[RMDB]
RNA sequence: GGGAACGACUCGAGUAGAGUCGAAAACUCCGGCUAUUCGUAGCCGGAGAAAAGCGUACUACGGUAUGAGGCAGAACUACCUACGUCUCCCAAAUAGGAGACCUAGGCUGCUACCCACCAUACCGUAUCGCAAAAGACCCAAUGUUCGCAUUGGGUCCUAUACUCCAAGAUUCGUCUUGGAGUAUAGAAAAGAAACAACAACAACAAC
Reactivity to 2A3 in 0.01 (KOAc 150mM, MgCl2 10mM, bicine 150mM(pH8.5), 24C), signal-to-noise 4, nucleotides 027 to 156: c000u000c000c010g010g020c010u010a030u060u110c180g120u090a020g000c000c000g010g000a000g000a000a010a000a000g000c000g030u080a070c040u010a000c030g010g000u000a000u000g010a030g020g010c010a000g000a130a060c100u150a070c220c000u000a010c020g000u000c000u030c010c020c020a210a260a110u240a090g010g000a000g000a000c010c020u000a000g000g000c000u000g000c000u030a060c040c040c020a030c000c030a000u010a000c000c000g000u010a000u090c000g020c010a010a030a060a080g000a010c000c000c000a000a000u030g010u070u090c260g010c180a010u000u000g000g000g000u000c000
Reactivity to DMS in 0.01 (KOAc 150mM, MgCl2 10mM, bicine 150mM(pH8.5), 24C), signal-to-noise 2, nucleotides 027 to 156: c010u010c010c010g030g000c000u000a030u010u020c300g060u010a010g040c020c020g010g000a020g000a000a020a040a190g000c030g030u000a060c150u000a000c020g010g000u000a000u000g020a140g000g010c010a010g010a050a140c040u000a020c000c010u010a030c080g010u000c000u010c010c000c030a060a140a280u000a010g010g000a040g000a010c000c020u000a000g000g010c020u010g010c020u000a020c010c000c010a260c150c000a020u010a000c010c000g000u000a000u000c000g070c020a090a080a130a110g000a030c000c000c010a000a020u000g000u000u010c300g030c010a040u000u000g020g010g020u000c000
This 207-nucleotide RNA was probed chemically with 2A3 and DMS. Source: RMDB library RNAMAK, as collected in RNAgym. The 2A3 profile rests on 5,381 reads.